About this RNA:
An RNA of 177 nucleotides, treated with 2A3 and DMS and read out base by base. For 2A3, 2,400 sequencing reads were counted. The reactions ran in a buffer of 150 mM KOAc, 10 mM MgCl2 and 150 mM bicine (pH 8.5), at 24 C. For DMS the reverse transcriptase was MarathonRT.

[RMDB]
RNA sequence: GGGAACGACUCGAGUAGAGUCGAAAAGAUAUGGAAACCUCGCAAGCGGUCACAAUCGGAAACGAUUGAAGUCCGUGAUGACCGAGGGUUUCCUAAGUCAAAACUCGGAUAGUUCGCUAUCCGAGAAGCAUUAGAUUCGGUUCGCCGAAUCUAAUGCAAAAGAAACAACAACAACAAC
Reactivity to 2A3 in 0.01 (KOAc 150mM, MgCl2 10mM, bicine 150mM(pH8.5), 24C), signal-to-noise 1, nucleotides 027 to 126: g010a010u000a000u030g020g000a000a010a000c000c020u000c000g000c030a180a190g030c010g000g030u080c040a020c060a100a010u000c020g000g020a030a000a010c020g010a000u000u000g050a070a050g160u040c000c010g000u000g140a300u060g030a000c020c020g010a040g040g060g000u000u000u000c000c000u000a010a000g000u000c020a030a010a130a230c000u010c000g000g010a000u000a010g020u050u070c270g040c130u010a000u000c010c000g000a010g000a000a000
Reactivity to DMS in 0.01 (KOAc 150mM, MgCl2 10mM, bicine 150mM(pH8.5), 24C), signal-to-noise 2, nucleotides 027 to 126: g000a010u000a170u010g000g000a010a000a020c000c010u000c000g020c000a040a100g010c000g020g000u000c080a180c050a010a000u000c010g010g000a030a040a120c000g010a010u000u000g000a090a170g020u010c000c010g030u010g000a050u010g030a100c300c000g000a020g000g010g000u000u000u000c010c000u000a010a090g000u000c000a090a070a120a190c000u000c000g010g000a000u000a000g020u000u010c270g010c010u000a010u000c000c000g000a000g010a060a060